This 177-nucleotide RNA was probed chemically with 2A3. It was measured as part of the RMDB libraries RFM100 and RFMREP. 2A3 adducts were read by reverse transcription with SuperScript II with manganese.

[RMDB]
RNA sequence: GGGAACGACUCGAGUAGAGUCGAAAAUAAGCAGUGUUCCGUCAUUGCUUAGUGUGGAAACAACGUUCUGUCGUUGUGGAAACCAAUAACUGCUAACCAUGUCCUACAACCAAGUGACACUUGCGGUGGGUCUAAACCGUUUCGACGGUUUAGACCCAAAAGAAACAACAACAACAAC
Reactivity to 2A3 in 0.01 (KOAc 150mM, MgCl2 10mM, bicine 150mM(pH8.5), 24C), signal-to-noise 3, nucleotides 027 to 126: u140a050a000g000c010a000g010u020g040u180u300c030c090g130u130c030a010u020u000g000c000u000u050a080g000u120g090u060g170g000a010a010a010c000a000a000c050g060u300u300c170u300g180u300c000g010u010u000g000u000g000g010a020a000a000c030c000a020a010u190a150a020c030u040g060c030u030a080a080c010c000a000u070g000u020c020c000u090a050c070a130a080c000c010a010a110g020u050g030a010c000a000c060u090u040g020c020g000g050u050